[RMDB]
RNA sequence: GGGAACGACUCGAGUAGAGUCGAAAAGAAAGGCGAAGGAAGGAUACGUGAGCCGAAAAGCGUAGAGAUGAGAUGACAGAAAAAUGUGAAUCGAUCUGAAAAGAAGAAAACUUCCUGAAAGAAAAGAGGGUAAUCAAAAGUUCGCUUUUGAUUACCCAAAAGAAACAACAACAACAAC
Reactivity to DMS in 0.01 (KOAc 150mM, MgCl2 10mM, bicine 150mM(pH8.5), 24C), signal-to-noise 3, nucleotides 027 to 126: g000a060a090a090g000g020c070g000a120a090g020g030a060a050g000g000a100u020a050c090g010u030g000a080g000c100c030g010a080a040a070a190g000c010g030u020a060g010a070g010a010u030g000a130g040a050u030g000a080c080a060g030a030a070a050a110a050u010g020u020g000a060a050u020c020g010a050u010c000u000g000a090a060a080a110g000a120a080g000a050a060a070a040c070u000u000c000c000u010g010a140a060a130g010a090a030a080a160g010a280
Reactivity to 2A3 in 0.01 (KOAc 150mM, MgCl2 10mM, bicine 150mM(pH8.5), 24C), signal-to-noise 2, nucleotides 027 to 126: g120a000a060a000g060g060c080g040a010a000g000g000a010a010g010g010a020u030a030c020g090u040g090a070g070c020c000g060a020a040a000a000g010c020g000u050a040g030a010g010a120u080g010a020g000a100u050g010a000c020a010g270a160a120a000a000a000u130g040u070g020a020a010u110c050g010a050u000c020u050g000a030a070a010a000g050a010a020g020a040a020a020a000c000u000u000c010c010u070g010a100a150a010g130a090a110a110a010g050a090